[RMDB]
RNA sequence: GGGAACGACUCGAGUAGAGUCGAAAAUUGACCAUGUCACAGAGAGGGAAAUCACGCUGACGAACAUGGGGAAAGUUGGCUUUGAGUUCAAGGUUCUGACUGACCACCAGUCUUCUCCAGACAACCUUCUCCCUGGAGUGCCACUAAUCCUGCCUGAUAAUUUAGGAUAGUUCGCUAUCCUAAAUUAAAAAGAAACAACAACAACAAC
Reactivity to 2A3 in 0.01 (KOAc 150mM, MgCl2 10mM, bicine 150mM(pH8.5), 24C), signal-to-noise 7, nucleotides 027 to 156: u090u070g030a030c020c020a040u080g020u030c030a010c050a060g050a010g020a060g080g010g050a060a110a060u120c040a040c100g050c040u060g060a090c050g030a140a000c020a050u070g000g000g010g030a030a070a090g050u050u040g010g000c000u040u030u040g080a150g020u060u090c030a030a010g020g010u070u010c030u030g030a020c000u010g030a060c020c020a040c030c010a040g000u000c020u090u000c010u020c020c000a030g010a050c030a040a090c020c010u080u010c030u040c020c010c010u010g020g010a030g010u030g030c010c010a040c040u040a010a040u020c010c000u050g030c010c020u050g040a070
Reactivity to DMS in 0.01 (KOAc 150mM, MgCl2 10mM, bicine 150mM(pH8.5), 24C), signal-to-noise 4, nucleotides 027 to 156: u000u010g020a130c030c030a080u000g000u000c040a140c050a080g010a100g010a110g000g010g010a070a100a100u000c050a100c100g010c020u000g030a100c080g010a080a060c050a070u000g010g000g000g020a060a060a110g010u010u000g000g000c030u000u010u000g000a140g020u000u000c040a050a040g000g020u000u000c010u000g020a120c060u000g010a140c040c040a130c080c020a090g010u000c020u000u000c020u010c040c060a090g000a070c050a030a080c030c020u000u000c030u000c040c090c020u000g000g010a090g030u000g010c030c040a080c060u000a080a100u000c010c000u000g000c040c010u000g000a280